[RMDB]
RNA sequence: GGGAACGACUCGAGUAGAGUCGAAAAAAUACUAUUCAGCCAUGAAAAAGAAUGAGAAUCUGUCAUUUGAAACAACAUGGAUGGAACUGGAGGACAUUAUGUUAAGUGAAAUAAGCCAGACAGAAGGAUUACCACUCUCGUUCGCGAGAGUGGUAAUAAAAGAAACAACAACAACAAC
Reactivity to DMS in 0.01 (KOAc 150mM, MgCl2 10mM, bicine 150mM(pH8.5), 24C), signal-to-noise 1, nucleotides 027 to 126: a150a050u000a150c050u000a050u000u000c000a040g000c020c000a010u000g000a080a060a040a130a240g000a020a000u000g010a160g010a070a070u010c190u000g020u000c030a060u000u000u000g010a030a130a040c270a050a130c030a020u000g010g070a010u000g020g000a020a070c040u000g000g010a130g000g000a130c100a020u000u030a030u000g010u000u000a100a150g000u000g030a000a070a120u000a070a080g040c040c100a040g020a080c110a120g020a110a140g000g020

Structure probing data (DMS) for a 177-nucleotide construct. The data come from the RNA Mapping Database (RMDB), library OK2TST. Reactivities are given for positions 27 through 126.